[RMDB]
Chemical mapping of a 177-nucleotide RNA with 2A3 and DMS. Source: RMDB library OK2TST, as collected in RNAgym. Values are in units of 0.01, from 0 to 300, in steps of 10. For DMS, 1,399 sequencing reads were counted. Values cover nucleotides 27 to 126.

RNA sequence: GGGAACGACUCGAGUAGAGUCGAAAAUGUACAUGUUCGUGAUGUAGAUGGUGAAAAAACUGCAUUUCCAGAUACAUUAGUUGGUACUGAUUCACAUACAACAAUGAUAAAUGGUAUUGGCGUACUAACUCAUCCAAACGUUCGCGUUUGGAUGAGUAAAAGAAACAACAACAACAAC
Reactivity to 2A3 in 0.01 (KOAc 150mM, MgCl2 10mM, bicine 150mM(pH8.5), 24C), signal-to-noise 1, nucleotides 027 to 126: u120g000u010a020c010a130u060g070u000u130c130g070u070g010a000u010g050u000a000g030a180u050g030g100u130g160a110a000a040a020a000a020c120u170g020c040a020u080u090u040c010c040a060g000a050u080a000c010a040u030u040a030g040u000u120g030g000u060a060c020u000g010a090u070u110c050a010c000a040u150a050c000a070a000c000a090a150u060g080a040u130a140a130a100u200g020g020u100a070u000u020g090g040c010g020u000a030c030u040a000
Reactivity to DMS in 0.01 (KOAc 150mM, MgCl2 10mM, bicine 150mM(pH8.5), 24C), signal-to-noise 2, nucleotides 027 to 126: u000g000u000a010c100a110u000g000u040u010c060g020u040g000a040u000g030u000a040g010a080u000g030g020u000g010a000a000a090a130a110a110c100u010g020c120a040u000u000u010c040c060a070g010a210u000a000c020a040u000u000a110g010u000u000g000g020u000a010c060u000g020a150u000u000c110a040c100a040u010a040c080a060a020c120a030a040u000g000a100u000a030a090a070u000g010g000u020a050u000u010g010g010c130g040u020a040c080u000a050